Source: RMDB library TTRDEL, as collected in RNAgym.
Chemical mapping of a 177-nucleotide RNA with DMS and 2A3.
RNA sequence: GGGAACGACUCGAGUAGAGUCGAAAAGAUAUGGAAGUGGCUUUUGACGUCUAUCUUGUCGGAAACGACAAGUAAGGACGAUAAGCCAGUUCCUAAGUCGCAGGUAUAAGUGUUCGCACUUAUACAAGUUAAACCUUUUGUUCGCAAAAGGUUUAACAAAAGAAACAACAACAACAAC
Reactivity to DMS in 0.01 (KOAc 150mM, MgCl2 10mM, bicine 150mM(pH8.5), 24C), signal-to-noise 5, nucleotides 027 to 126: g000a030u010a300u000g000g010a020a010g010u000g020g000c000u000u000u000u010g020a140c090g000u000c010u000a300u010c000u000u000g010u000c000g010g000a090a080a170c010g010a010c000a000a000g000u020a090a240g000g000a010c000g010a090u000a000a020g010c000c000a010g010u000u000c000c000u000a030a120g010u000c000g000c250a130g000g020u000a010u000a000a000g020u010g010u010u010c210g020c010a010c000u000u010a000u000a000c010a070a080
Reactivity to 2A3 in 0.01 (KOAc 150mM, MgCl2 10mM, bicine 150mM(pH8.5), 24C), signal-to-noise 3, nucleotides 027 to 126: g020a010u040a020u120g000g030a020a020g300u000g020g010c020u070u080u100u270g270a150c070g000u010c000u020a110u040c000u000u000g000u010c000g010g020a090a060a050c020g010a000c020a000a000g010u020a140a020g070g000a010c030g020a010u010a020a000g000c000c000a010g020u000u000c010c000u010a120a020g030u010c040g030c190a060g250g000u010a010u000a010a010g010u010g080u090u150c300g030c140a000c010u020u000a000u000a010c000a030a000

Conditions: 150 mM KOAc, 10 mM MgCl2 and 150 mM bicine (pH 8.5), 24 C.